Structure probing data (2A3 and DMS) for a 207-nucleotide construct. Source: RMDB library M2RFPK, as collected in RNAgym. The reactions ran in a buffer of 150 mM KOAc, 10 mM MgCl2 and 150 mM bicine (pH 8.5), at 24 C. For DMS the reverse transcriptase was MarathonRT.
[RMDB]
RNA sequence: GGGAACGACUCGAGUAGAGUCGAAAAUCAUUGAGAUGCUGGGCGCUAUGGUCGUCCUCCUCCGGCUGACCUCCUUCUCAGCUGCUGACCGGCGCCGCAGAGGCGGCAUCUCAGCUUCGUGUGCAAAAAAAGAAUGGUCGGUUCGCCGACCAUUCAAUCAAUUACACUGGUUCGCCAGUGUAAUUGAAAAAGAAACAACAACAACAAC
Reactivity to 2A3 in 0.01 (KOAc 150mM, MgCl2 10mM, bicine 150mM(pH8.5), 24C), signal-to-noise 4, nucleotides 027 to 156: u110c020a050u050u080g000a000g000a000u010g000c000u020g010g020g000c020g000c040u090a150u300g040g020u040c020g080u070c050c060u050c000c010u040c020c050g010g020c000u000g010a030c020c060u150c040c040u280u090c060u010c030a010g010c010u030g000c040u060g000a010c010c010g000g000c010g000c030c000g000c020a020g020a020g040g040c010g010g010c000a000u000c000u000c000a010g000c040u150u170c080g100u100g040u060g120c080a100a110a030a020a010a000a020g010a000a000u000g000g000u000c000g000g040u040u060c170g000c080c000g000a000c000c000a000u000u000c000a010a000
Reactivity to DMS in 0.01 (KOAc 150mM, MgCl2 10mM, bicine 150mM(pH8.5), 24C), signal-to-noise 4, nucleotides 027 to 156: u000c070a140u010u000g010a030g010a030u000g020c010u000g020g010g010c000g030c020u010a040u010g070g020u000c010g010u000c040c030u000c030c020u000c020c020g010g010c010u000g010a050c050c070u010c120c120u000u010c080u000c010a030g000c010u000g020c040u010g010a030c010c010g010g000c010g030c010c010g030c080a080g010a130g020g010c020g020g020c010a020u000c000u000c010a040g010c070u000u010c140g010u000g020u000g010c020a020a000a110a120a090a130a210g010a040a010u000g000g010u000c000g030g000u000u010c300g020c020c000g000a020c000c000a000u000u000c000a050a150